RNA sequence: GGGAACGACUCGAGUAGAGUCGAAAACUAGGAAUGUUCUGAUGAGUUUCAGUCUGAAGGCAGGGAGAUGGUCUCGGUGACCUCCUGGGCCCCUGUUCUGCACUGAACUGUAUGCCCAUACAUUCAUAGGUUGAGAUCGUAACACUCCAGUACCUCAGAGCUACCCAAAUUUCGAUUUGGGUAGCUCAAAAGAAACAACAACAACAAC
Reactivity to 2A3 in 0.01 (KOAc 150mM, MgCl2 10mM, bicine 150mM(pH8.5), 24C), signal-to-noise 1, nucleotides 027 to 156: c000u000a010g000g070a090a060u020g000u040u040c120u160g090a080u100g040a000g050u000u030u230c050a000g030u020c000u160g090a150a010g000g000c030a010g000g070g020a070g000a130u300g000g040u010c020u120c130g050g160u180g090a130c020c000u100c030c000u100g070g050g000c120c000c000c000u020g030u110u080c050u080g000c040a100c090u010g010a060a000c070u010g070u170a070u090g050c040c000c000a080u130a100c060a000u040u240c060a050u040a050g000g060u080u140g020a080g000a140u040c050g020u110a020a000c000a020c020u000c000c000a000g070u010a030c020c020u000c000a020